RNA sequence: GGGAACGACUCGAGUAGAGUCGAAAAAAAUUCCACUAAAAAGGGUUAAAGAAAAAUCUAUUCACUGAACUUAUUGAUGAAAACUUUAAAUGCGUCAAGUACAUCAAAAGAGGAAACAGAGGGAAAGCAAGACUUUUUCAUUCGUGAAAAAGUCUUGAAAAGAAACAACAACAACAAC
Reactivity to 2A3 in 0.01 (KOAc 150mM, MgCl2 10mM, bicine 150mM(pH8.5), 24C), signal-to-noise 2, nucleotides 027 to 126: a000a000a000u070u000c010c010a090c000u170a060a040a050a020a030g070g020g050u040u140a110a050a040g170a070a090a030a000a000u080c060u090a180u030u080c090a060c050u140g100a180a060c010u080u040a060u230u000g010a000u030g040a020a060a060a000c020u000u110u120a070a240a190u200g080c030g020u030c020a020a020g000u020a070c000a000u030c010a000a000a020a030g070a060g000g090a130a080a000c010a000g040a050g010g110g010a010a010a010g000
Reactivity to DMS in 0.01 (KOAc 150mM, MgCl2 10mM, bicine 150mM(pH8.5), 24C), signal-to-noise 1, nucleotides 027 to 126: a110a040a130u020u020c000c020a100c130u040a080a040a100a070a030g000g000g000u000u060a070a040a100g000a070a130a040a080a070u050c040u010a040u010u030c020a130c030u000g000a100a040c000u000u000a040u000u000g040a080u000g000a070a060a070a030c010u020u020u030a100a060a030u000g030c110g030u000c100a020a050g060u000a070c000a000u020c010a010a020a080a090g000a010g010g000a050a040a040c030a010g040a110g000g000g000a010a070a130g010
Conditions: 150 mM KOAc, 10 mM MgCl2 and 150 mM bicine (pH 8.5), 24 C. This 177-nucleotide RNA was probed chemically with 2A3 and DMS. For 2A3, 716 sequencing reads were counted. Reactivities are given for positions 27 through 126.